Structure probing data (2A3 and DMS) for a 177-nucleotide construct. The data come from the RNA Mapping Database (RMDB), library OK2TST. For 2A3 the reverse transcriptase was SuperScript II with manganese. The reactions ran in a buffer of 150 mM KOAc, 10 mM MgCl2 and 150 mM bicine (pH 8.5), at 24 C. For DMS the reverse transcriptase was MarathonRT.
RNA sequence: GGGAACGACUCGAGUAGAGUCGAAAAUGGUUUCAGUAUCAGGUUGAAAGGCAAAGAUUCGGGCACUUUUCGCUUGGGCGGCUAAAGCUGCCUUGGUACCAUGAAUAGCGUCAGUUAACUCGAAGGCCUAUAGACAUUCCUUCGGGAAUGUCUAUAGAAAAGAAACAACAACAACAAC
Reactivity to 2A3 in 0.01 (KOAc 150mM, MgCl2 10mM, bicine 150mM(pH8.5), 24C), signal-to-noise 2, nucleotides 027 to 126: u080g020g030u020u000u080c030a020g050u060a040u140c020a030g040g040u090u070g060a090a050a030g030g000c040a150a110a010g060a100u000u090c040g040g000g000c040a040c010u080u060u080u090c040g000c020u020u070g000g030g020c000g000g000c030u100a160a050a060g030c020u010g000c000c000u000u000g030g000u030a070c020c050a060u090g040a040a050u150a020g030c010g030u010c010a070g040u010u060a040a040c000u020c040g010a060a020g070g020c020
Reactivity to DMS in 0.01 (KOAc 150mM, MgCl2 10mM, bicine 150mM(pH8.5), 24C), signal-to-noise 4, nucleotides 027 to 126: u000g000g010u000u000u010c060a060g000u000a060u010c070a050g010g000u000u010g010a070a070a060g010g020c040a070a110a110g010a140u000u000c050g010g010g010c070a040c040u000u000u000u000c070g000c040u000u000g000g000g000c030g030g020c030u010a060a100a190g010c020u000g010c020c000u000u000g000g000u000a080c090c060a060u000g000a040a070u000a050g010c090g000u010c060a060g000u000u000a070a080c040u000c040g010a050a100g010g000c110